[RMDB]
RNA sequence: GGGAACGACUCGAGUAGAGUCGAAAAACCGGCGGUAAAUCAACUCAGUUGAAAGCCGCGAGCGCUUUGGGUGCGAACUCAAAGGACAGCAGUUCCGGUGUAAUUCCGGGGCCGACGGUUAGAGUCCAAAAGAGGUUAUCGUUCGCGAUAACCUCAACAUGUCUUGUAAGUUCGCUUACAAGACAUGAAAAGAAACAACAACAACAAC
Reactivity to 2A3 in 0.01 (KOAc 150mM, MgCl2 10mM, bicine 150mM(pH8.5), 24C), signal-to-noise 2, nucleotides 027 to 156: a000c010c000g010g000c030g000g000u130a240a250a220u020c010a020a010c050u130c300a150g010u010u020g010a040a060a030g020c000c000g000c000g010a050g000c000g010c000u010u010u000g000g000g000u040g030c060g050a090a010c000u000c010a010a000a010g020g010a050c000a010g000c000a000g010u000u000c010c010g000g000u020g020u070a060a000u130u040c000c010g000g010g000g010c010c010g070a040c020g000g000u010u030a060g020a030g140u050c010c010a020a050a020a130g000a000g010g000u010u000a010u000c010g030u060u060c190g010c000g090a010u000a000a000c010c000u000c000a000a000
Reactivity to DMS in 0.01 (KOAc 150mM, MgCl2 10mM, bicine 150mM(pH8.5), 24C), signal-to-noise 2, nucleotides 027 to 156: a030c010c010g030g000c000g010g020u010a020a110a200u000c000a040a050c030u000c070a200g020u010u000g000a040a160a300g000c000c000g000c000g010a090g030c020g020c030u000u000u000g000g000g030u000g010c300g010a260a050c020u000c010a010a040a030g030g000a070c030a230g010c020a040g010u000u000c000c000g040g040u000g000u000a200a300u000u000c020c000g000g030g000g010c000c000g000a040c010g010g000u000u000a140g000a220g000u000c010c030a030a050a090a180g000a020g010g010u000u000a020u000c010g040u020u000c270g040c000g040a030u000a000a000c000c000u000c000a000a050